[RMDB]
RNA sequence: GGGAACGACUCGAGUAGAGUCGAAAAGAUAUGGAGAACUACAGCGAAACGAGCGAAGAACUUCUUCGGAAACGAAGAAGGGAGCUCGGUAAGCUGCUCCUAAGUCAAACUGCGCUUCGGCGCAGAACACCUUACACUAGUUCGCUAGUGUAAGGUGAAAAGAAACAACAACAACAAC
Reactivity to DMS in 0.01 (KOAc 150mM, MgCl2 10mM, bicine 150mM(pH8.5), 24C), signal-to-noise 4, nucleotides 027 to 126: g000a040u020a300u000g010g000a040g000a130a030c070u030a300c010a020g010c010g000a050a230a120c010g010a020g010c000g000a080a120g000a110a170c000u000u000c000u000u010c010g010g000a080a060a160c010g000a000a010g000a020a020g000g000g000a080g030c000u000c010g010g010u000a040a300g000c000u000g000c010u000c010c000u000a050a150g000u010c030a080a100a230c010u000g010c000g020c000u000u010c220g030g000c000g020c020a000g000a070a190
Reactivity to 2A3 in 0.01 (KOAc 150mM, MgCl2 10mM, bicine 150mM(pH8.5), 24C), signal-to-noise 4, nucleotides 027 to 126: g000a010u090a030u270g040g040a030g020a130a060c140u260a090c300a010g000c000g020a210a210a080c000g000a000g010c040g160a300a050g010a070a030c000u000u000c000u000u000c010g000g020a070a050a040c010g000a000a000g000a010a010g010g000g000a010g000c000u010c000g010g000u010a030a000g010c000u000g000c000u000c000c010u010a110a010g010u020c050a070a070a110c020u010g010c000g010c010u060u090c300g180g000c010g000c000a000g000a010a010
The record gives the reactivity of an RNA of 177 nucleotides to DMS and 2A3. Source: RMDB library TTRDEL, as collected in RNAgym. The DMS profile rests on 3,821 reads.